[RMDB]
RNA sequence: GGGAACGACUCGAGUAGAGUCGAAAAGUUCGUGGUCUUCGGGAUUGGCGCCUUGAACACAUCGUUCGUCAAGGAUGGCGAGGUAUCGGUUCCGUUGAGCUAUGUGACCGGCACAUUGGUCAAGAUGCAUGGCUGGGGAAUUCGUUCCCCAGCCAUGAAAAGAAACAACAACAACAAC
Reactivity to 2A3 in 0.01 (KOAc 150mM, MgCl2 10mM, bicine 150mM(pH8.5), 24C), signal-to-noise 4, nucleotides 027 to 126: g060u070u110c000g010u020g050g010u010c000u000u020c010g000g000g000a010u000u050g040g000c040g000c000c000u000u010g140a210a040c070a020c000a110u070c020g190u190u120c130g150u230c150a110a050g140g000a000u000g040g030c000g010a000g000g000u040a010u100c020g020g050u020u010c000c000g000u000u020g020a090g000c010u020a010u050g100u050g020a020c000c000g020g050c130a060c040a220u110u180g040g000u040c010a010a030g130a090u130g010
Reactivity to DMS in 0.01 (KOAc 150mM, MgCl2 10mM, bicine 150mM(pH8.5), 24C), signal-to-noise 2, nucleotides 027 to 126: g010u000u000c050g040u010g010g020u010c070u000u000c010g050g010g030a030u000u020g000g020c100g050c000c010u040u000g000a150a110c080a250c030a070u020c000g000u000u020c250g010u100c220a070a090g000g020a000u000g000g020c000g000a030g000g000u040a020u030c000g010g000u000u000c000c020g050u000u000g010a130g010c010u000a020u000g020u000g000a020c000c010g000g010c150a080c160a140u020u000g010g000u040c040a100a090g000a090u040g010
Chemical mapping of a 177-nucleotide RNA with 2A3 and DMS. The RNA was probed in 150 mM KOAc, 10 mM MgCl2 and 150 mM bicine (pH 8.5) at 24 C. It was measured as part of the RMDB library OK1LIB.